Structure probing data (2A3) for a 207-nucleotide construct. The 2A3 profile rests on 590 reads.
RNA sequence: GGGAACGACUCGAGUAGAGUCGAAAAAUACUUCUCAGGAUGGCGCGUUGCAGUCCAACAAGAUCCAGGGACUGUACAGAAUCUUCCUAUACCUCGAGUCGGGUUUGGAAUCUAAGGUUGACUCGCUAAAACUUUACGUGGUUCGCCACGUAAAGAACUAGCCUUCUUAGUUCGCUAAGAAGGCUAGAAAAGAAACAACAACAACAAC
Reactivity to 2A3 in 0.01 (KOAc 150mM, MgCl2 10mM, bicine 150mM(pH8.5), 24C), signal-to-noise 1, nucleotides 027 to 156: a000u110a050c020u040u090c010u010c040a020g010g000a020u010g050g060c020g000c030g260u170u060g060c010a000g020u000c020c000a040a160c090a110a120g140a200u060c070c060a080g020g020g000a000c000u010g000u020a000c020a000g090a140a090u000c040u030u000c040c050u040a060u100a100c000c050u000c080g000a000g000u000c010g020g030g000u030u110u070g000g050a070a080u130c040u100a090a110g130g020u080u130g030a030c050u010c010g020c020u080a060a050a010a040c010u000u000u000a000c010g000u000g000g040u010u040c130g020c140c000a000c000g020u000a000a000a000g000a000a010